[RMDB]
RNA sequence: GGGAACGACUCGAGUAGAGUCGAAAACUGUGGUGCUCACCUGACCCUGCAGGCAGAAAAAGAAAAAGAGGUGGGCGGGGAAGAAGUCCUUCUGGGAUCCCCGGGGAAACCUGGAGGAAGUCGAGGUGUAUACCUCGACGUUCGCGUCGAGGUAUACAAAAGAAACAACAACAACAAC
Reactivity to DMS in 0.01 (KOAc 150mM, MgCl2 10mM, bicine 150mM(pH8.5), 24C), signal-to-noise 1, nucleotides 027 to 126: c050u010g010u000g000g020u000g000c040u010c050a080c030c000u000g030a190c040c020c020u000g020c030a050g000g020c080a070g010a050a050a060a120a060g000a110a040a070a120a120g010a070g010g010u000g000g000g030c050g020g000g000g010a110a090g020a060a050g000u000c010c030u010u000c070u010g000g000g010a240u000c010c000c040c060g000g000g000g000a060a040a180c010c000u000g000g000a040g000g000a030a070g020u000c070g000a060g000g000u010
Reactivity to 2A3 in 0.01 (KOAc 150mM, MgCl2 10mM, bicine 150mM(pH8.5), 24C), signal-to-noise 1, nucleotides 027 to 126: c020u010g030u090g140g000u080g000c010u010c010a040c020c010u010g050a070c000c000c050u050g030c040a070g030g000c050a020g160a030a240a010a050a030g120a040a140a020a020a000g110a010g010g040u050g020g030g000c030g000g000g000g010a060a150g010a080a000g040u000c000c000u020u040c050u050g010g000g010a040u030c020c030c000c050g170g020g000g000a020a040a020c000c000u020g020g010a020g000g030a050a000g040u050c050g040a060g000g080u070
Structure probing data (DMS and 2A3) for a 177-nucleotide construct. Conditions: 150 mM KOAc, 10 mM MgCl2 and 150 mM bicine (pH 8.5), 24 C. The data come from the RNA Mapping Database (RMDB), library VIROID.